Structure probing data (DMS and 2A3) for a 177-nucleotide construct. 2A3 adducts were read by reverse transcription with SuperScript II with manganese. DMS adducts were read by reverse transcription with MarathonRT. High DMS reactivity at an A or C suggests that its Watson-Crick edge is free. For 2A3, 3,124 sequencing reads were counted. For DMS, 2,346 sequencing reads were counted. Source: RMDB library TTRDEL, as collected in RNAgym.
RNA sequence: GGGAACGACUCGAGUAGAGUCGAAAAGAUAUGGACCGAGAGCGACGAUCAUACGGGAUCGGAAACGAUCUUAUGGGAGCUCGGCGUCCUAAGUCAAAAGUCUCGAGUUCUUCGGAACUCGAGACAACAUAUCGGAGAGCUUCGGCUCUCCGAUAUGAAAAGAAACAACAACAACAAC
Reactivity to DMS in 0.01 (KOAc 150mM, MgCl2 10mM, bicine 150mM(pH8.5), 24C), signal-to-noise 3, nucleotides 027 to 126: g010a030u000a300u000g000g000a030c000c020g010a240g010a010g010c000g020a090c270g010a070u010c000a040u000a030c300g020g000g000a000u010c000g010g000a050a050a170c020g020a020u000c020u000u000a020u000g000g000g000a090g030c010u010c020g000g030c270g000u000c010c000u000a050a090g000u000c030a100a120a070a140g000u000c000u000c000g000a010g000u000u000c000u000u020c160g030g000a010a000c000u000c000g000a010g000a000c000a020a090
Reactivity to 2A3 in 0.01 (KOAc 150mM, MgCl2 10mM, bicine 150mM(pH8.5), 24C), signal-to-noise 2, nucleotides 027 to 126: g030a030u060a020u160g010g010a000c000c030g070a080g000a020g240c010g300a300c050g030a110u050c020a000u110a130c160g140g030g000a000u010c000g010g000a010a070a000c020g010a010u000c000u010u030a020u060g090g010g040a030g000c020u000c000g000g060c080g010u000c000c000u010a110a010g020u020c000a040a120a030a120g040u000c000u010c000g010a010g000u010u000c000u040u160c300g100g010a000a000c000u000c010g000a010g010a000c000a010a000